[RMDB]
RNA sequence: GGGAACGACUCGAGUAGAGUCGAAAAACUGCCAUACGUGGCAGAAAUACGCCUUACCAGGACUAAACAGCGUGUCUAAAAAACAGUCCUUCAUACCUGAUCUGGAGGGUAGAUCAGGAAUACUAAAAAAAUCGGGUGAAGUUCGCUUCACCCGAAAGAAGGGAUUUUAGUUCGCUAAAAUCCCUUCAAAAGAAACAACAACAACAAC
Reactivity to 2A3 in 0.01 (KOAc 150mM, MgCl2 10mM, bicine 150mM(pH8.5), 24C), signal-to-noise 1, nucleotides 027 to 156: a000c000u000g000c000c000a040u040a040c100g070u030g020g040c020a010g000a010a010a000u030a020c010g000c030c010u020u080a020c000c020a020g000g000a030c050u100a050a000a150c030a060g020c020g050u030g050u060c080u100a110a010a020a030a000a050c020a000g000u010c010c010u040u030c070a090u060a080c000c000u000g000a000u020c000u010g070g000a060g040g090g060u040a030g010a000u010c020a010g000g070a000a010u080a080c140u130a020a000a090a090a070a090a130u040c000g000g010g000u000g010a000a000g020u030u070c090g020c050u040u000c010a000c000c030c000g000a000a000a000